[RMDB]
RNA sequence: GGGAACGACUCGAGUAGAGUCGAAAAAAGCGCCCUGCGAUGCCCCAGCCACUGUGAACCUUUCUGCCUGCCCAGAUACACUCAACCCAGGACGAAAUCAGCCUUGGACACCCUGCACUCUGCGCACCUCAGAGACAGCAUUCGUGCUGUCUCUGAGAAAAGAAACAACAACAACAAC
Reactivity to 2A3 in 0.01 (KOAc 150mM, MgCl2 10mM, bicine 150mM(pH8.5), 24C), signal-to-noise 2, nucleotides 027 to 126: a000a000g060c050g040c010c000c000u030g040c030g100a080u080g040c000c010c000c000a010g030c030c010a030c020u020g010u030g110a030a050c010c000u040u100u010c020u020g000c040c000u050g010c020c000c020a040g010a000u160a040c020a010c030u060c020a000a100c010c000c040a000g000g060a070c040g060a010a020a080u110c000a000g030c000c030u020u070g060g010a010c010a050c010c020c000u040g000c000a010c040u090c030u070g030c010g020c010a020c000
Reactivity to DMS in 0.01 (KOAc 150mM, MgCl2 10mM, bicine 150mM(pH8.5), 24C), signal-to-noise 1, nucleotides 027 to 126: a030a060g030c210g000c040c020c060u000g000c070g000a100u000g000c010c020c010c110a080g010c070c000a050c050u030g000u030g000a070a070c060c020u000u000u010c020u000g120c100c060u010g020c070c130c000a070g000a090u010a040c040a000c010u000c010a070a070c130c000c010a080g010g020a040c050g010a070a100a160u010c070a050g000c010c020u000u040g000g000a100c090a130c040c050c030u000g010c070a040c000u000c000u010g010c020g020c060a040c090
Description:
The record gives the reactivity of an RNA of 177 nucleotides to 2A3 and DMS. The reactions ran in a buffer of 150 mM KOAc, 10 mM MgCl2 and 150 mM bicine (pH 8.5), at 24 C. For DMS the reverse transcriptase was MarathonRT. 2A3 adducts were read by reverse transcription with SuperScript II with manganese.